Source: RMDB libraries RFM100 and RFMREP, as collected in RNAgym. The record gives the reactivity of an RNA of 177 nucleotides to 2A3 and DMS. 2A3 adducts were read by reverse transcription with SuperScript II with manganese. The reactions ran in a buffer of 150 mM KOAc, 10 mM MgCl2 and 150 mM bicine (pH 8.5), at 24 C. The 2A3 profile rests on 2,211 reads.

RNA sequence: GGGAACGACUCGAGUAGAGUCGAAAACAACGCCGAGUCUCUGAGAAGAGGGAGCAUGGGGUGUGCUGAUUUAAAAACAGAAAAUGCAAAGUUGGACUGAAAAUAUCCCACGUCUUCUAAGCAAUCUUCGCAAUGUGAUAUUCGUAUCACAUUGCGAAAAAGAAACAACAACAACAAC
Reactivity to 2A3 in 0.01 (KOAc 150mM, MgCl2 10mM, bicine 150mM(pH8.5), 24C), signal-to-noise 4, nucleotides 027 to 126: c030a010a000c010g020c000c010g010a020g030u020c010u000c000u040g060a070g010a160a000g030a000g000g010g010a020g030c000a040u060g020g000g000g010u020g000u000g030c030u020g030a120u030u090u240a080a150a040a010a030c040a010g130a060a110a050a050u080g020c070a120a070a050g040u070u040g050g030a070c030u050g040a040a040a020a060u150a040u020c000c020c000a030c040g070u010c020u110u000c030u050a040a020g010c010a020a130u040c030u040
Reactivity to DMS in 0.01 (KOAc 150mM, MgCl2 10mM, bicine 150mM(pH8.5), 24C), signal-to-noise 2, nucleotides 027 to 126: c120a120a190c120g000c010c000g010a160g000u000c000u020c020u000g010a120g020a240a010g030a100g060g000g010a100g010c070a030u010g020g020g000g050u000g000u000g000c090u000g000a090u000u000u010a060a020a090a100a160c020a090g000a040a060a100a050u010g000c110a020a060a060g030u000u000g020g020a110c010u050g000a070a010a010a040u000a120u020c010c000c010a110c100g000u020c070u000u000c020u000a070a240g000c170a130a040u020c020u000